Structure probing data (2A3 and DMS) for a 170-nucleotide construct. 2A3 adducts were read by reverse transcription with SuperScript II with manganese. Conditions: 150 mM KOAc, 10 mM MgCl2 and 150 mM bicine (pH 8.5), 24 C. For 2A3, 52,445 sequencing reads were counted. Reactivities are rounded to 0.1 and cut off at 0 and 3. For DMS the reverse transcriptase was MarathonRT.
[RMDB]
RNA sequence: GGGAACGACUCGAGUAGAGUCGAAAAUGCUGGGUCUUACCACUCAGACUGUUGAUUCCUCACAGGGUUCAGAAUACCAGUACGUUAUCUUCUGUCAAACAGCAGAUACGGCACAUGCUAACAACAUCAAGAUUAUCGUUCGCGAUAAUCAAAAGAAACAACAACAACAAC
Reactivity to 2A3 in 0.01 (KOAc 150mM, MgCl2 10mM, bicine 150mM(pH8.5), 24C), signal-to-noise 9, nucleotides 027 to 129: u110g000c000u010g000g010g010u010c030u060u100a070c030c000a030c020u040c010a020g040a280c040u030g090u110u070g040a100u080u040c010c000u040c010a070c040a040g060g020g000u080u080c040a020g070a130a040u060a130c020c010a010g050u050a060c040g050u110u100a020u010c010u050u000c000u020g080u080c050a130a120a140c000a070g010c000a000g000a010u000a010c000g010g010c030a040c010a110u110g040c030u100a110a030c040a040a020c010a090u110c060a080a030
Reactivity to DMS in 0.01 (KOAc 150mM, MgCl2 10mM, bicine 150mM(pH8.5), 24C), signal-to-noise 9, nucleotides 027 to 129: u040g000c020u020g000g000g000u050c010u010u070a130c140c240a070c000u020c030a000g040a110c130u000g000u030u050g050a230u040u050c000c000u000c140a120c140a110g010g000g010u020u010c090a100g030a130a080u030a030c090c020a090g040u000a060c070g000u010u020a010u000c010u030u020c000u040g030u030c190a110a100a270c030a010g010c070a050g000a040u000a000c000g000g000c070a040c090a020u030g000c070u050a060a030c120a040a090c090a070u070c140a110a090